[RMDB]
RNA sequence: GGGAACGACUCGAGUAGAGUCGAAAAGUAUUGUGGGGACCACCUCUACGAGAGGUGUUAGGCAUUAGCCAGCCACAACGGCUUGCACGCGAGUCUAGACCCCUUCGUGCAAACAUAUUCAAGCAGCCACGAUACCUGGCUUCGGCCAGGUAUCGUGAAAAGAAACAACAACAACAAC
Reactivity to 2A3 in 0.01 (KOAc 150mM, MgCl2 10mM, bicine 150mM(pH8.5), 24C), signal-to-noise 1, nucleotides 027 to 126: g180u190a070u130u000g010u000g000g000g050g160a120c060c000a000c020c000u000c000u030a210c300g090a010g000a010g100g000u000g010u020u100a030g000g000c000a020u070u070a030g000c030c000a050g000c000c000a000c000a000a000c000g030g000c000u040u000g000c070a000c040g000c060g000a000g000u000c000u000a010g230a120c000c000c000c000u000u110c170g010u000g010c000a000a070a090c040a040u100a040u110u110c040a050a000g040c000a060g000c050